[RMDB]
RNA sequence: GGGAACGACUCGAGUAGAGUCGAAAACCUACUGCCUUCGGGCAGUAGGAAACAGGUGCUUCUACAACCUGAAUAACUAGAUGAAACAUCUAGUGUAGAAGAAAAGGAACCGCUUCGGCGGUUCCAACGUACUCACAUAGUUCGCUAUGUGAGUACGAAAAGAAACAACAACAACAAC
Reactivity to DMS in 0.01 (KOAc 150mM, MgCl2 10mM, bicine 150mM(pH8.5), 24C), signal-to-noise 2, nucleotides 027 to 126: c010c000u000a010c000u000g000c000c000u000u020c210g030g010g020c000a000g030u000a000g000g010a010a050a170c010a000g000g010u000g000c060u000u000c000u000a010c000a180a020c000c000u000g000a120a110u000a070a050c000u010a000g000a010u000g010a190a140a160c080a030u000c000u000a000g010u000g010u010a000g010a010a010g000a090a100a110a120g000g000a040a000c000c010g030c010u000u010c170g020g000c000g020g000u010u000c000c000a020a030
Reactivity to 2A3 in 0.01 (KOAc 150mM, MgCl2 10mM, bicine 150mM(pH8.5), 24C), signal-to-noise 2, nucleotides 027 to 126: c000c000u010a000c000u000g000c000c000u040u060c180g030g000g010c010a010g000u000a000g000g000a010a040a000c010a010g020g010u010g010c030u030u020c010u000a020c000a080a030c010c010u040g040a060a060u120a060a030c000u000a000g010a020u040g120a300a290a080c020a040u020c010u010a000g020u000g010u020a010g030a070a000g000a010a120a010a040g000g010a000a000c000c000g000c010u040u110c270g140g010c000g000g000u000u000c000c010a000a000